[RMDB]
RNA sequence: GGGAACGACUCGAGUAGAGUCGAAAAGACGGCUGAUAACACGCUAACACUGGUGAAGAAGGAGACAGGGAUCGGAUAGUACCGGAAUUCUCUUUCCGUAAUAGCCUAGCACCUGAGUGGCGACACUAUCUGGAGUCUCGGAAAUCUCCUGUAUUGGUCACUCUGUCUUAUUCGUAAGACAGAGUGAAAAAGAAACAACAACAACAAC
Reactivity to DMS in 0.01 (KOAc 150mM, MgCl2 10mM, bicine 150mM(pH8.5), 24C), signal-to-noise 4, nucleotides 027 to 156: g000a080c070g030g000c020u010g010a170u000a070a100c070a080c090g020c020u000a120a110c070a100c040u000g000g030u000g020a120a100g000a130a050g010g000a050g000a080c080a090g010g010g010a090u000c050g010g000a040u000a040g010u000a110c150c020g040g020a040a070u000u020c170u010c120u000u000u000c010c010g010u000a050a110u000a120g010c010c020u000a170g000c060a070c050c020u010g010a150g010u000g010g020c010g000a220c100a020c020u000a020u000c020u010g030g020a140g010u000c030u000c020g020g010a070a060a100u000c010u000c000c000u000g010u000a080u000u010g010g010
Reactivity to 2A3 in 0.01 (KOAc 150mM, MgCl2 10mM, bicine 150mM(pH8.5), 24C), signal-to-noise 5, nucleotides 027 to 156: g090a030c060g030g000c020u030g030a090u090a160a030c050a010c100g020c030u050a120a010c030a020c090u110g050g010u080g070a110a100g040a040a030g020g020a020g020a030c120a170g040g000g000a020u080c020g000g010a000u000a010g030u040a040c030c040g020g050a010a020u260u040c110u030c000u150u050u000c000c000g010u030a080a080u060a120g000c000c020u010a030g040c040a100c090c030u070g040a090g070u130g040g000c000g030a020c010a000c100u020a020u020c000u030g100g110a090g090u010c000u020c010g010g030a100a150a050u040c020u000c000c000u010g030u040a120u120u080g060g010